[RMDB]
RNA sequence: GGGAACGACUCGAGUAGAGUCGAAAAUCUAGGGUUCCGCAUGUCAAUUGACAUGGACUGGUCCGAGAGAAAACACAUACGCGUAAAUACAAGCGCGUAUGCACACGGAGGGAAAAAAGCCCGGGAGAAUGGGAUUAUUAGUUCGCUAAUAAUCCAAGGAUACUAUAUUGUUCGCAAUAUAGUAUCCAAAAGAAACAACAACAACAAC
Reactivity to 2A3 in 0.01 (KOAc 150mM, MgCl2 10mM, bicine 150mM(pH8.5), 24C), signal-to-noise 4, nucleotides 027 to 156: u020c000u030a030g000g000g000u010u010c000c000g010c000a000u010g000u000c030a160a300u210u300g000a010c000a000u010g020g030a070c020u090g020g000u000c010c000g000a000g000a000g000a000a030a010a010c060a000c000a000u000a010c000g020c000g040u080a070a230a090u220a190c120a200a120g010c000g010c000g000u000a000u010g000c020a000c000a000c030g030g000a030g010g000g000a120a300a000a040a010a000g000c000c000c000g010g080g010a020g020a030a090u210g070g000g000a000u000u000a000u010u000a010g020u030u030c170g000c110u000a000a000u000a000a000u000c000c000a000a030
Reactivity to DMS in 0.01 (KOAc 150mM, MgCl2 10mM, bicine 150mM(pH8.5), 24C), signal-to-noise 2, nucleotides 027 to 156: u000c010u000a040g000g010g010u010u010c020c000g000c000a040u010g020u000c010a300a190u000u000g000a040c010a010u000g030g020a080c030u020g020g030u000c010c010g020a110g010a040g000a190a090a110a080c140a070c030a010u000a000c010g000c010g070u000a030a100a170u000a210c170a090a280g000c050g010c000g050u000a010u000g000c000a070c070a100c000g000g000a260g020g000g010a000a060a080a130a180a110g020c030c040c050g000g010g010a120g000a140a080u020g000g010g000a000u000u000a000u000u000a010g000u000u000c300g010c000u000a010a020u000a020a010u000c000c010a030a160
The record gives the reactivity of an RNA of 207 nucleotides to 2A3 and DMS.
DMS adducts were read by reverse transcription with MarathonRT.
The RNA was probed in 150 mM KOAc, 10 mM MgCl2 and 150 mM bicine (pH 8.5) at 24 C.
High 2A3 reactivity points to a flexible backbone, as in loops and unpaired stretches.
Source: RMDB library M2RFPK, as collected in RNAgym.
For 2A3 the reverse transcriptase was SuperScript II with manganese.